[RMDB]
RNA sequence: GGGAACGACUCGAGUAGAGUCGAAAAUACCAAUGGUUCGCCAUUGGUACUUGUAUUGACGAAUACAACCGUAGAAGUAUUCAGGUCUCAUAACUACGGAUAUACACUAGAGUUUCGACUCUAGUAACAACGAGGCUUGAUUCGUCAAGCCUCGUUGAAAAGAAACAACAACAACAAC
Reactivity to 2A3 in 0.01 (KOAc 150mM, MgCl2 10mM, bicine 150mM(pH8.5), 24C), signal-to-noise 2, nucleotides 027 to 126: u040a000c010c000a000a000u000g000g030u040u050c220g060c090c000a000u000u010g000g000u000a050c020u000u100g050u090a180u040u210g120a060c060g010a040a000u030a030c040a090a190c010c000g030u020a020g020a220a010g050u030a060u090u050c070a030g090g010u000c040u000c050a140u110a150a070c000u020a000c000g000g000a010u020a010u030a130c060a000c000u010a000g000a000g000u070u000u110c140g000a020c000u030c010u000a010g000u000a010a050
Reactivity to DMS in 0.01 (KOAc 150mM, MgCl2 10mM, bicine 150mM(pH8.5), 24C), signal-to-noise 1, nucleotides 027 to 126: u000a010c010c000a000a010u000g000g010u000u000c190g010c000c000a010u000u000g000g000u000a000c040u010u000g010u000a050u000u020g000a230c110g000a040a010u000a030c000a040a190c010c010g000u000a040g000a130a230g000u010a010u010u000c070a180g000g000u000c010u000c010a090u020a150a150c040u000a000c000g000g000a300u010a160u010a100c190a060c000u000a000g000a040g000u000u000u010c140g000a010c000u000c000u000a000g000u010a010a130
The record gives the reactivity of an RNA of 177 nucleotides to 2A3 and DMS. The RNA was probed in 150 mM KOAc, 10 mM MgCl2 and 150 mM bicine (pH 8.5) at 24 C. For 2A3 the reverse transcriptase was SuperScript II with manganese. It was measured as part of the RMDB library M2PK50.